[RMDB]
RNA sequence: GGGAACGACUCGAGUAGAGUCGAAAACAGCUCUGCAGCGACCAGGAGCCCCUGUCAUGCCCCACAAUGGAACUCAAGUGCGUCCGGCCAGUUCCGUAUCCACACAGACUGCCCAGAACCAGAGCCAUAAUUAGUGGUGGUUCGCCACCACUAAUUAAAAAGAAACAACAACAACAAC
Reactivity to DMS in 0.01 (KOAc 150mM, MgCl2 10mM, bicine 150mM(pH8.5), 24C), signal-to-noise 2, nucleotides 027 to 126: c120a110g000c040u010c020u000g030c040a070g020c020g030a060c070c040a160g000g020a140g010c040c030c040c030u000g020u010c050a070u000g010c050c010c030c050a080c100a090a110u000g010g020a050a050c030u000c090a050a070g010u000g000c070g020u000c050c050g020g020c040c060a050g000u020u010c010c010g010u010a050u010c050c040a070c070a070c060a040g000a120c050u000g030c040c030c020a080g000a050a090c060c030a050g000a070g010c060c070a150
An RNA of 177 nucleotides, treated with DMS and read out base by base. For DMS the reverse transcriptase was MarathonRT. Reactivities are rounded to 0.1 and cut off at 0 and 3. Values cover nucleotides 27 to 126. DMS (dimethyl sulfate) methylates the pairing face of unpaired adenines and cytosines.